[RMDB]
RNA sequence: GGGAACGACUCGAGUAGAGUCGAAAACAGGCGAUGCAAGCAAUGCGGCAGCAGCACGAGAUGGAGCAGGCAUUUCAGAACUCGCAGCAGCAGCAGGUUGCCGUUGUGCAGGGCGGACAGAUGCUUGAUAUGUCGGUAGAUUCGUCUACCGACAUAUAAAAGAAACAACAACAACAAC
Reactivity to 2A3 in 0.01 (KOAc 150mM, MgCl2 10mM, bicine 150mM(pH8.5), 24C), signal-to-noise 1, nucleotides 027 to 126: c040a020g050g000c020g060a020u050g090c030a010a080g000c020a040a080u080g020c040g040g000c020a020g000c020a010g000c030a000c040g080a100g010a050u070g060g030a060g030c050a020g050g000c020a040u020u060u090c020a030g030a090a040c010u010c050g010c030a070g000c000a000g000c000a000g010c010a020g070g070u120u060g000c010c010g030u040u040g020u030g010c050a030g000g000g040c020g000g030a000c000a010g050a010u110g020c000u030u020g050
Reactivity to DMS in 0.01 (KOAc 150mM, MgCl2 10mM, bicine 150mM(pH8.5), 24C), signal-to-noise 5, nucleotides 027 to 126: c110a090g000g020c040g000a080u000g020c050a080a100g020c080a070a080u000g020c060g000g020c030a050g020c020a100g010c050a080c080g000a090g000a080u000g000g000a080g010c050a040g000g010c040a050u000u010u010c070a110g010a080a080c070u000c040g010c060a080g010c040a050g010c040a050g010c080a050g000g010u000u000g030c010c040g010u000u000g020u010g020c080a080g000g000g000c050g010g010a070c160a070g010a050u000g000c030u010u000g000
This 177-nucleotide RNA was probed chemically with 2A3 and DMS. For 2A3 the reverse transcriptase was SuperScript II with manganese. Values cover nucleotides 27 to 126. The DMS profile rests on 6,345 reads. For 2A3, 3,098 sequencing reads were counted.